[RMDB]
RNA sequence: GGGAACGACUCGAGUAGAGUCGAAAAACUGCGAUUCGUCGCAGUAAAAGCGUACUACCAAACGAGGAUCGUGAUUGCUAGUAUCGUCCCAAAUAGGACGAUACUUGGACCAAUUCACGGGAGUUUGGUAUCGCAAACUUUAGUCUUCGGACUAAAGGGAAGAGUAAAGGUUCGCCUUUACUCUUCCAAAAGAAACAACAACAACAAC
Reactivity to 2A3 in 0.01 (KOAc 150mM, MgCl2 10mM, bicine 150mM(pH8.5), 24C), signal-to-noise 5, nucleotides 027 to 156: a010c010u000g000c010g020a020u030u070c210g060u010c010g100c020a000g000u030a010a030a000a030g000c010g020u070a100c050u000a010c030c000a000a000a000c010g030a200g070g010a020u010c000g000u000g000a000u000u010g020c020u000a000g000u000a000u000c000g000u000c030c020c000a160a300a120u300a090g000g000a000c000g000a010u000a000c000u010u070g020g010a030c060c040a030a050u240u090c010a000c000g000g000g010a030g000u000u010u010g000g000u000a000u040c000g000c000a030a030a080c000u010u000u010a010g000u000c020u030u060c200g100g000a000c000u010a020a000a000g030
Reactivity to DMS in 0.01 (KOAc 150mM, MgCl2 10mM, bicine 150mM(pH8.5), 24C), signal-to-noise 2, nucleotides 027 to 156: a020c010u010g000c000g020a030u000u000c300g040u000c010g040c010a020g000u000a010a060a090a210g020c020g020u000a100c110u000a030c000c000a010a030a040c010g020a170g000g000a080u000c000g030u000g010a030u000u000g010c010u000a030g030u000a010u000c000g000u000c000c010c030a040a180a280u000a060g000g020a060c000g010a010u000a000c000u000u000g050g020a120c210c060a030a040u000u000c000a020c010g010g000g000a090g020u000u000u000g000g000u000a000u020c020g000c010a080a090a240c010u000u000u000a020g020u000c000u000u000c300g020g000a020c000u000a000a010a010g000
This 207-nucleotide RNA was probed chemically with 2A3 and DMS. Values cover nucleotides 27 to 156. The RNA was probed in 150 mM KOAc, 10 mM MgCl2 and 150 mM bicine (pH 8.5) at 24 C. The data come from the RNA Mapping Database (RMDB), library RNAMAK.